Overview
This 177-nucleotide RNA was probed chemically with 2A3 and DMS. For 2A3 the reverse transcriptase was SuperScript II with manganese. For 2A3, 4,174 sequencing reads were counted.
[RMDB]
RNA sequence: GGGAACGACUCGAGUAGAGUCGAAAAAAAAGAUAUGGAUUAAUGGAGCUGUCAGUGACUAAGACAGAUCGUCGGAAACGACGAUUCGAGUCACUGUACAGCGAUGAAGUUAAUCCUAAGUCAAAAACAAUAACACAGAGUUCGCUCUGUGUUAUUGAAAAGAAACAACAACAACAAC
Reactivity to 2A3 in 0.01 (KOAc 150mM, MgCl2 10mM, bicine 150mM(pH8.5), 24C), signal-to-noise 1, nucleotides 027 to 126: a000a020a000a010g060a040u110a040u160g000g000a010u000u020a000a020u010g020g000a000g000c010u010g020u020c020a010g000u000g010a000c010u080a230a100g120a100c070a040g130a030u000c010g010u000c000g030g010a070a080a100c000g000a000c000g000a000u020u030c010g020a010g000u000c000a000c020u000g070u120a010c010a000g000c000g010a010u020g030a000a000g010u000u000a020a000u000c000c000u020a150a040g060u040c040a040a020a000a050a150
Reactivity to DMS in 0.01 (KOAc 150mM, MgCl2 10mM, bicine 150mM(pH8.5), 24C), signal-to-noise 4, nucleotides 027 to 126: a060a050a140a090g010a040u010a300u010g010g000a010u000u010a000a010u000g000g010a060g030c000u000g020u000c000a010g010u000g010a020c000u010a140a100g020a180c300a120g010a010u000c010g020u000c000g010g010a150a090a140c010g010a010c000g000a000u000u000c100g010a030g000u000c000a000c000u000g000u020a000c010a000g030c000g020a000u030g010a110a210g000u000u000a000a020u000c000c000u000a040a140g000u010c020a040a080a070a090a140